[RMDB]
Structure probing data (2A3) for a 207-nucleotide construct. Reactivities are given for positions 27 through 156. For 2A3, 488 sequencing reads were counted.
RNA sequence: GGGAACGACUCGAGUAGAGUCGAAAAUUAAUACUGCUACAUUUUUAAGAACCUUAGUUAUUUAGCUUUACCGCCCAGGAUGGGGUGCAGCGUUCCUGCAAUAUCCAGGGCACCUAGGUGCAGCCUUCAUGCCUCAUGCCGUUCGCGGCAUGAGGAACCUCAUGCAAUACUUCGGUAUUGCAUGAGGAAAAGAAACAACAACAACAAC
Reactivity to 2A3 in 0.01 (KOAc 150mM, MgCl2 10mM, bicine 150mM(pH8.5), 24C), signal-to-noise 1, nucleotides 027 to 156: u080u080a050a130u090a180c040u060g040c030u010a050c080a180u170u140u070u070u110a210a030g040a120a070c020c010u100u050a010g020u080u080a030u110u190u110a030g020c020u030u070u000a050c040c000g020c030c000c000a040g010g000a010u010g010g050g000g080u040g000c010a020g000c030g070u120u080c000c000u000g020c000a000a080u000a010u130c000c000a000g000g000g000c010a060c000c000u040a020g050g020u000g040c010a040g050c010c010u030u080c070a060u170g040c000c010u000c000a000u010g010c000c000g100u100u030c210g010c050g110g000c000a000u040g020a000g030g010a000a000